[RMDB]
RNA sequence: GGGAACGACUCGAGUAGAGUCGAAAAAGCACUCAAUAACCCUACGUUAUUAAGUUUUCCAUUAUGUGGUCUAAAGAGUGCUGUUACUCUCCGACAAGAAUCACUUCAAUUCCAAUUUUGCGUAAUCCAGAUACCAAAUCUUCGGAUUUGGUAUCUGAAAAGAAACAACAACAACAAC
Reactivity to 2A3 in 0.01 (KOAc 150mM, MgCl2 10mM, bicine 150mM(pH8.5), 24C), signal-to-noise 2, nucleotides 027 to 126: a020g010c000a000c000u000c020a050a120u020a010a030c010c010c140u090a030c100g050u060u030a090u100u070a070a180g070u030u050u080u070c030c010a070u120u080a070u200g110u040g030g000u010c090u110a020a090a040g000a000g000u010g010c000u000g000u010u050a040c000u020c000u000c030c020g070a050c060a010a060g080a080a070u090c000a010c030u090u060c060a090a150u130u060c050c020a090a200u060u110u130u170g060c040g020u080a000a050u070c090
Reactivity to DMS in 0.01 (KOAc 150mM, MgCl2 10mM, bicine 150mM(pH8.5), 24C), signal-to-noise 4, nucleotides 027 to 126: a040g020c020a010c000u010c000a050a200u010a070a050c050c070c090u000a100c120g000u000u010a040u000u000a110a110g010u000u000u020u000c070c070a130u010u010a070u010g000u000g010g000u000c080u000a070a070a200g000a010g010u000g000c020u000g000u000u020a070c120u000c010u010c020c070g000a080c110a060a100g000a070a050u000c060a040c060u000u000c070a040a120u000u010c030c050a050a110u000u010u000u000g010c070g000u000a080a110u010c090
The record gives the reactivity of an RNA of 177 nucleotides to 2A3 and DMS.
2A3 adducts were read by reverse transcription with SuperScript II with manganese.
Reactivities are given for positions 27 through 126.
The RNA was probed in 150 mM KOAc, 10 mM MgCl2 and 150 mM bicine (pH 8.5) at 24 C.
DMS adducts were read by reverse transcription with MarathonRT.
Source: RMDB library OK2TST, as collected in RNAgym.